[RMDB]
Chemical mapping of a 207-nucleotide RNA with 2A3 and DMS.
RNA sequence: GGGAACGACUCGAGUAGAGUCGAAAAUGUAGGUGGUCUGUAACACCUGCACAUCUUUUUAUACGUGUAGAGGGUAUGCCUGGGAUAUAUAGGUUGUCUUCAAGCAGUAGCUGCUACUACAGCUAGAGAGAGGAGGAGUGCCAGGAAACUGAUGACCCUUUCACCUCUAGUUCGCUAGAGGUGAAAGAAAAGAAACAACAACAACAAC
Reactivity to 2A3 in 0.01 (KOAc 150mM, MgCl2 10mM, bicine 150mM(pH8.5), 24C), signal-to-noise 1, nucleotides 027 to 156: u070g010u010a010g000g060u010g030g020u020c090u180g190u140a090a010c000a000c000c000u030g010c000a000c000a020u100c010u180u220u000u020u110a220u090a050c050g070u090g040u060a070g000a040g040g000g020u050a040u130g010c040c060u090g000g000g000a040u070a040u050a010u030a140g030g030u010u070g010u000c000u030u050c040a050a050g100c000a000g020u020a000g050c050u030g010c020u020a020c000u000a050c050a010g000c000u080a060g000a000g010a000g000a010g090g070a010g010g000a030g030u060g060c060c010a000g100g000a220a010a040c070u080g020a020u200g000a030c000c020
Reactivity to DMS in 0.01 (KOAc 150mM, MgCl2 10mM, bicine 150mM(pH8.5), 24C), signal-to-noise 1, nucleotides 027 to 156: u000g000u010a040g010g030u000g000g010u010c060u020g020u000a120a080c000a060c010c010u000g020c000a050c090a040u000c020u000u030u030u040u000a070u010a160c070g010u000g030u000a010g010a180g010g010g060u000a050u000g040c010c010u000g020g010g010a090u000a180u000a130u000a110g020g040u000u030g010u000c030u010u000c030a070a090g110c030a050g000u000a080g030c010u000g000c050u000a140c120u000a020c050a030g000c010u000a000g000a120g040a040g030a070g040g010a070g020g000a070g070u010g020c000c030a020g010g000a050a080a080c070u000g010a080u000g000a140c090c030

The reactions ran in a buffer of 150 mM KOAc, 10 mM MgCl2 and 150 mM bicine (pH 8.5), at 24 C.